[RMDB]
RNA sequence: GGGAACGACUCGAGUAGAGUCGAAAACGUGCCUUCAUGCUAAGGGUUUGAUAUCUGCUAAAACCCGGUGCAUUCAUCAAUGCAGGUUAAGCCAAAGGGAUGUCCCGACCUGAGGCCGACAAUCCAGAUAGCUCAAGAAUGUUCGCAUUCUUGAGAACCUCUCUGAUGGUUUCGACCAUCAGAGAGGAAAAGAAACAACAACAACAAC
Reactivity to 2A3 in 0.01 (KOAc 150mM, MgCl2 10mM, bicine 150mM(pH8.5), 24C), signal-to-noise 2, nucleotides 027 to 156: c040g080u120g020c000c010u220u120c110a060u110g010c050u080a090a130g040g000g050u000u000u050g000a010u010a080u080c040u060g040c010u050a010a010a030a040c040c010c000g000g010u020g020c020a090u050u200c040a080u110c050a100a210u100g000c030a000g120g000u070u060a030a000g000c000c000a020a040a000g000g020g000a040u130g010u030c000c000c000g010a010c000c000u000g000a000g020g000c010c000g000a010c020a090a020u030c090c020a020g140a300u130a050g040c000u000c000a000a000g000a000a030u000g030u000u090c150g020c090a000u000u000c010u000u020g000a000g000a000a020
Reactivity to DMS in 0.01 (KOAc 150mM, MgCl2 10mM, bicine 150mM(pH8.5), 24C), signal-to-noise 1, nucleotides 027 to 156: c070g020u000g020c020c000u000u020c080a040u000g020c050u020a300a180g040g000g030u000u000u000g000a200u000a070u020c050u000g020c050u010a110a050a020a040c010c050c000g040g070u000g050c010a120u000u050c050a000u000c160a070a170u000g000c020a020g000g020u010u010a150a090g040c020c040a110a120a090g030g000g000a110u000g000u010c050c000c010g010a260c000c000u000g000a300g000g050c000c010g000a190c110a120a190u020c020c020a100g010a130u010a070g010c010u000c000a000a040g010a020a020u000g000u000u000c300g050c050a080u000u000c000u000u020g000a000g000a020a040